Chemical mapping of a 177-nucleotide RNA with 2A3 and DMS. Conditions: 150 mM KOAc, 10 mM MgCl2 and 150 mM bicine (pH 8.5), 24 C. In probing experiments dimethyl sulfate is read out at A N1 and C N3, which are open when not base-paired. For DMS the reverse transcriptase was MarathonRT.
RNA sequence: GGGAACGACUCGAGUAGAGUCGAAAACUUGUACGUCUUCCUCCCGGAUAACCUCCACCGACUCUGUGGAACCGCGUUCGGCAACAUACCGUCAACGUGUCAUUGGCUUGUGUGUCAUUGAGAUCCCCACUGUAUAGUUUUUCGAAACUAUACAGUGAAAAGAAACAACAACAACAAC
Reactivity to 2A3 in 0.01 (KOAc 150mM, MgCl2 10mM, bicine 150mM(pH8.5), 24C), signal-to-noise 9, nucleotides 027 to 126: c020u030u090g060u120a040c040g020u010c020u040u010c010c010u030c010c010c020g030g010a070u080a090a060c010c010u030c010c010a030c000c020g090a070c030u010c040u090g040u050g050g040a060a030c030c020g020c010g040u050u040c030g030g020c020a060a020c010a130u150a070c030c020g040u040c030a030a030c040g040u040g040u080c030a060u020u070g020g000c010u080u070g050u030g010u020g010u120c020a070u030u100g040a040g010a080u020c000c000c000
Reactivity to DMS in 0.01 (KOAc 150mM, MgCl2 10mM, bicine 150mM(pH8.5), 24C), signal-to-noise 9, nucleotides 027 to 126: c070u000u010g010u010a060c090g010u000c030u000u000c030c020u000c030c020c020g000g010a090u010a070a110c100c040u000c020c020a080c070c050g000a080c050u000c040u000g020u000g000g010a080a100c090c040g010c070g010u010u000c060g010g010c050a070a080c150a100u010a080c070c070g010u000c060a040a040c060g010u000g010u010c050a070u000u000g010g010c020u000u010g010u010g010u010g010u000c030a070u010u010g000a100g010a130u000c010c000c010